[RMDB]
RNA sequence: GGGAACGACUCGAGUAGAGUCGAAAAGGUAUCGUUGGCGCAAUGAUAGAGAUUGGUGUUAAACGUGGAUUAUACUCAAAUGAGGCUGGUCAAGGUACAGGUCCACACGCAGCAGCGGCAGCAGAAGAUACCAAGGGAGAUUCGUCUCCCUUGGUAUAAAAGAAACAACAACAACAAC
Reactivity to 2A3 in 0.01 (KOAc 150mM, MgCl2 10mM, bicine 150mM(pH8.5), 24C), signal-to-noise 5, nucleotides 027 to 126: g080g010u040a020u080c020g020u030u050g050g020c020g000c040a050a070u080g060a120u120a080g090a020g030a060u020u070g030g040u050g080u150u120a120a080a020c060g020u020g010g000a020u040u040a040u100a100c060u080c050a080a100a100u240g010a050g060g000c030u070g030g030u070c040a050a070g030g000u030a040c030a010g000g050u000c000c000a020c000a000c070g020c020a080g000c000a010g000c030g030g000c000a010g010c000a000g010a160a000g040
Reactivity to DMS in 0.01 (KOAc 150mM, MgCl2 10mM, bicine 150mM(pH8.5), 24C), signal-to-noise 6, nucleotides 027 to 126: g000g000u000a020u010c040g050u000u000g010g000c070g050c050a100a050u010g000a090u020a100g000a060g010a100u010u020g010g000u000g000u010u000a070a050a100c130g000u000g000g000a070u010u020a110u030a080c060u020c070a060a090a080u030g000a090g000g010c050u000g010g000u010c050a070a090g000g010u020a060c090a060g000g010u020c020c010a050c090a100c090g000c060a080g020c060a070g000c040g000g000c030a030g010c060a060g000a060a120g000
This 177-nucleotide RNA was probed chemically with 2A3 and DMS. DMS adducts were read by reverse transcription with MarathonRT.